[RMDB]
RNA sequence: GGGAACGACUCGAGUAGAGUCGAAAAGAAGUGGAUUGCAGAUGCUAGAUUUGGAGAGAUGCAGUUUGUGCAAAGGAGGCUCUUGAAAAGGGCUUCGAAAUGUGUCUGCCAAGGCUAAAAUAAUCACAUUUUGUAUUUGCACAGCAUUUUCAUUGUACAUGCAUACCGCAUUCGUGCGGUAUGCAUGAAAAGAAACAACAACAACAAC
Reactivity to 2A3 in 0.01 (KOAc 150mM, MgCl2 10mM, bicine 150mM(pH8.5), 24C), signal-to-noise 1, nucleotides 027 to 156: g080a090a000g050u070g030g000a080u120u090g040c070a000g010a060u070g050c030u050a080g010a130u090u030u140g020g010a050g000a000g010a010u090g010c000a000g010u060u210u080g000u010g010c000a000a000a030g120g010a010g010g010c010u000c010u000u000g080a080a110a000a000g000g000g000c000u040u020c050g000a010a000a000u000g010u010g010u110c090u100g050c010c000a050a020g050g000c020u110a020a080a010a150u150a190a040u020c000a000c000a000u000u000u020u100g080u030a110u020u020u000g000c010a010c010a020g040c000a010u050u070u020u060c070a050u080u140g050u020a060
Chemical mapping of a 207-nucleotide RNA with 2A3. The RNA was probed in 150 mM KOAc, 10 mM MgCl2 and 150 mM bicine (pH 8.5) at 24 C. 2A3 adducts were read by reverse transcription with SuperScript II with manganese. It was measured as part of the RMDB library OK3TST.